[RMDB]
RNA sequence: GGGAACGACUCGAGUAGAGUCGAAAAUAACAGUUCUGUGUCUUUGCAGUGGAAACUGGGAUGUCUUUAUUAACGUUAGGUCCUGAUGUAAGGCCAAGUUUUUGGUUAGAGUUGCUCAAGUGCAGAGACGACAAACUACUUUCGAGUAGUUUGUCGUAAAAGAAACAACAACAACAAC
Reactivity to DMS in 0.01 (KOAc 150mM, MgCl2 10mM, bicine 150mM(pH8.5), 24C), signal-to-noise 3, nucleotides 027 to 126: u010a090a120c120a080g020u000u000c030u000g010u000g010u000c010u000u010u010g010c030a030g030u000g020g010a040a060a040c030u000g000g020g020a030u000g010u010c030u000u000u000a070u010u000a080a090c170g000u010u000a080g000g000u010c020c020u000g020a120u020g020u010a090a120g000g000c000c020a030a070g000u000u010u010u010u000g010g020u000u000a090g000a200g010u000u000g000c080u010c040a070a120g020u000g000c050a050g010a060g000